[RMDB]
RNA sequence: GGGAACGACUCGAGUAGAGUCGAAAAAGACCCACACCCAAGUUCCAUAGCUUUUGGUUCGCUAUCCCGAUCAUGAUUUUCCUACCCCCAGAGGGAAAGGUACUUCCCUUUUGGGCCGGUUGUGGGCCCAUUCUCGCGCCUUCGGGCGCGAGAAUGGAAAAGAAACAACAACAACAAC
Reactivity to 2A3 in 0.01 (KOAc 150mM, MgCl2 10mM, bicine 150mM(pH8.5), 24C), signal-to-noise 2, nucleotides 027 to 126: a000g110a070c010c000c010a010c000a030c020c010c000a040a030g050u060u000c030c000a060u120a060g050c060u080u160u060u150g090g010u110u140c030g060c000u010a120u100c000c010c020g020a010u070c020a080u110g120a100u020u060u000u010c020c010u030a190c010c000c000c020c020a000g000a020g000g030g080a020a020a030g210g000u100a130c000u040u030c020c000c000u010u020u110u030g010g020g010c000c030g000g010u030u000g010u030g030g020g000c010

Structure probing data (2A3) for a 177-nucleotide construct. The data come from the RNA Mapping Database (RMDB), library OK1LIB. Conditions: 150 mM KOAc, 10 mM MgCl2 and 150 mM bicine (pH 8.5), 24 C.